[RMDB]
Conditions: 150 mM KOAc, 10 mM MgCl2 and 150 mM bicine (pH 8.5), 24 C.
The record gives the reactivity of an RNA of 177 nucleotides to 2A3 and DMS.
Values are in units of 0.01, from 0 to 300, in steps of 10.
In probing experiments dimethyl sulfate is read out at A N1 and C N3, which are open when not base-paired.
The data come from the RNA Mapping Database (RMDB), library OK2TST.
RNA sequence: GGGAACGACUCGAGUAGAGUCGAAAAGCAUGGGUAAAGCCCAUCGCCAGCGCUUCGGCUUUCAUUUCGUCGAACUCAUCCGGGCUAACGUAACGUUGAACCGGCAGGUGAUGGCGGCUUGGCUGCAUGUAAAACAGGGUUUCGACCCUGUUUUACAAAAAGAAACAACAACAACAAC
Reactivity to 2A3 in 0.01 (KOAc 150mM, MgCl2 10mM, bicine 150mM(pH8.5), 24C), signal-to-noise 2, nucleotides 027 to 126: g030c030a060u070g000g070g000u110a080a060a050g030c000c000c000a010u020c010g000c000c000a040g060c080g000c180u020u000c010g000g000c000u060u190u140c060a150u080u150u160c040g000u010c020g000a030a030c030u000c070a150u060c030c020g010g000g020c020u040a010a000c040g130u110a110a010c080g000u030u010g030a070a030c000c000g000g030c060a130g000g010u040g010a050u050g040g080c080g010g010c000u050u010g050g000c010u040g030c010a080
Reactivity to DMS in 0.01 (KOAc 150mM, MgCl2 10mM, bicine 150mM(pH8.5), 24C), signal-to-noise 5, nucleotides 027 to 126: g020c050a030u020g000g020g020u000a070a070a090g010c000c000c010a020u000c040g050c010c030a110g030c160g000c230u000u000c020g010g000c000u000u020u010c170a080u010u000u000c190g010u000c000g010a040a070c050u010c100a160u010c020c000g000g000g020c080u000a020a030c020g010u010a090a070c170g000u000u000g000a040a090c010c000g000g000c300a090g000g010u000g010a090u000g010g010c090g000g020c030u000u000g000g010c010u000g000c060a140

Record summary: 2A3 adducts were read by reverse transcription with SuperScript II with manganese.